[RMDB]
RNA sequence: GGGAACGACUCGAGUAGAGUCGAAAACAUCUUGUUCGCAAGAUGAAAAACCGUAGGGUCGAAUCCACAGGGAGCGUGCCAUUCGAAAGAGUGGAACUACACGCGAAGAACUGUGGACAUGUGACCCUAAACGGAAAAAGGAGUGUUCGCACUCCAACCGAAGACACUGAUUCGUCAGUGUCUUCGGAAAAGAAACAACAACAACAAC
Reactivity to 2A3 in 0.01 (KOAc 150mM, MgCl2 10mM, bicine 150mM(pH8.5), 24C), signal-to-noise 2, nucleotides 027 to 156: c000a000u010c000u000u020g010u090u100c170g030c130a000a030g010a050u040g040a210a000a000a030a000c010c000g010u010a040g000g000g000u010c030g000a030a060u010c000c000a010c000a000g000g000g010a080g010c000g010u020g040c010c010a010u000u000c020g030a100a030a030g030a020g020u020g010g020a020a020c050u150a030c040a000c000g000c000g010a040a000g030a020a010c000u010g000u010g040g000a000c040a040u240g100u130g010a000c000c040c000u010a040a060a000c030g020g110a100a040a040a010a030g070g000a040g000u070g020u110u230c230g070c120a010c000u160c070c000a000a000

Chemical mapping of a 207-nucleotide RNA with 2A3. Reactivities are rounded to 0.1 and cut off at 0 and 3. For 2A3 the reverse transcriptase was SuperScript II with manganese. Reactivities are given for positions 27 through 156.